Description: This 177-nucleotide RNA was probed chemically with DMS and 2A3. For DMS, 7,983 sequencing reads were counted.
RNA sequence: GGGAACGACUCGAGUAGAGUCGAAAAGAUAUGGAAAUGUCGACUGACGCGAAGAACUCGGAAACGAGGGAGCGUCGUCGAGCAUUUCCUAAGUCAAAACACCGGAUCCGUUCGCGGAUCCGGUGAACAAUGCAUAAGACUUCGGUCUUAUGCAUUGAAAAGAAACAACAACAACAAC
Reactivity to DMS in 0.01 (KOAc 150mM, MgCl2 10mM, bicine 150mM(pH8.5), 24C), signal-to-noise 5, nucleotides 027 to 126: g020a050u010a300u000g010g000a010a010a000u000g010u000c000g000a020c010u010g060a010c000g030c000g010a100a170g010a080a200c010u000c000g000g000a130a090a200c000g000a020g000g000g000a070g010c010g020u000c000g010u000c000g010a050g010c000a010u000u000u000c000c000u000a030a100g010u000c040a110a060a120a180c020a000c010c000g000g000a010u010c000c000g010u000u010c220g020c010g010g010a000u000c000c000g000g000u000g010a020a090
Reactivity to 2A3 in 0.01 (KOAc 150mM, MgCl2 10mM, bicine 150mM(pH8.5), 24C), signal-to-noise 4, nucleotides 027 to 126: g030a020u080a030u160g000g000a000a000a000u010g030u040c000g020a000c060u300g010a000c000g100c020g170a300a090g020a060a020c000u000c010g000g050a070a080a060c010g000a000g010g000g040a020g000c000g000u000c000g000u000c000g010a020g000c010a000u000u000u020c000c000u000a090a020g020u000c030a030a010a110a150c010a010c000c000g010g000a000u000c000c020g030u080u090c300g000c010g190g000a000u000c000c000g000g000u000g000a000a000

Reactivities are given for positions 27 through 126.
The 2A3 profile rests on 12,412 reads.
It was measured as part of the RMDB library TTRDEL.